Overview
The data come from the RNA Mapping Database (RMDB), library OK1LIB. Chemical mapping of a 177-nucleotide RNA with DMS and 2A3. The reactions ran in a buffer of 150 mM KOAc, 10 mM MgCl2 and 150 mM bicine (pH 8.5), at 24 C. Values cover nucleotides 27 to 126.
RNA sequence: GGGAACGACUCGAGUAGAGUCGAAAAGUCGGACGCGGUCAGCCACGGCGAUCCGGAAGACCUCGAUGGCGCUGCCCGGGCGGGAGAGGCGGGGGCCUUGCAUGCCUGUCCGAUGCCGUCGUCGACCUAUCGUAGCUGAAUUCGUUCAGCUACGAUAAAAAGAAACAACAACAACAAC
Reactivity to DMS in 0.01 (KOAc 150mM, MgCl2 10mM, bicine 150mM(pH8.5), 24C), signal-to-noise 3, nucleotides 027 to 126: g010u000c020g000g000a210c040g020c120g000g000u000c050a090g030c110c050a100c150g010g020c020g000a070u010c010c000g000g010a190a140g000a100c050c000u020c040g010a060u000g000g000c040g000c090u010g000c060c180c010g000g000g000c040g000g000g020a200g000a110g000g000c030g010g040g020g000g000c030c000u000u010g000c130a090u010g020c020c020u000g030u000c030c020g020a060u020g000c040c000g010u000c010g020u000c010g000a060c100c060
Reactivity to 2A3 in 0.01 (KOAc 150mM, MgCl2 10mM, bicine 150mM(pH8.5), 24C), signal-to-noise 8, nucleotides 027 to 126: g030u030c010g020g010a030c030g030c100g100g040u080c070a060g040c040c020a050c050g130g010c010g020a100u020c010c010g020g010a030a010g030a030c010c010u020c020g030a030u040g020g000c020g010c100u100g020c000c030c000g020g000g010c070g020g040g010a120g010a020g020g030c110g100g060g010g130g010c020c010u030u070g050c050a090u160g070c000c000u010g010u020c000c000g020a040u080g040c020c000g020u030c010g000u010c000g010a030c000c010